[RMDB]
RNA sequence: GGGAACGACUCGAGUAGAGUCGAAAACUAUCGGUGAUGAGGACUAUCAGUUAUUGUUACAGUGGGCUAUCGCCUGACCAAGCUGCAGAGUUGCUCUGUGUGAUGCGCUUAUUUGGACACCCUCUGCGUGAAUUAAUACGUUCGCGUAUUAAUUCACAAAAGAAACAACAACAACAAC
Reactivity to DMS in 0.01 (KOAc 150mM, MgCl2 10mM, bicine 150mM(pH8.5), 24C), signal-to-noise 6, nucleotides 027 to 126: c050u000a060u010c090g020g010u010g010a060u000g010a100g000g000a080c070u000a080u000c070a070g010u000u010a090u000u000g010u000u010a080c100a090g020u000g000g010g000c030u000a070u000c070g020c030c010u010g000a060c090c060a060a090g010c050u000g010c110a070g000a060g010u000u000g000c100u000c030u000g000u000g000u000g000a050u000g000c110g000c060u010u010a080u010u010u010g010g000a080c110a090c030c020c020u000c040u010g010c290
Reactivity to 2A3 in 0.01 (KOAc 150mM, MgCl2 10mM, bicine 150mM(pH8.5), 24C), signal-to-noise 4, nucleotides 027 to 126: c030u060a070u110c060g050g030u070g040a080u050g040a030g060g050a030c030u050a060u160c040a050g060u100u080a120u210u160g070u090u080a070c020a040g030u040g000g040g000c020u040a040u180c060g010c030c010u000g010a040c030c000a080a020g030c030u050g000c060a020g010a040g090u130u100g070c010u000c020u020g080u000g080u060g070a040u070g000c040g000c050u070u070a080u120u230u090g040g020a020c010a050c040c010c010u000c010u030g020c000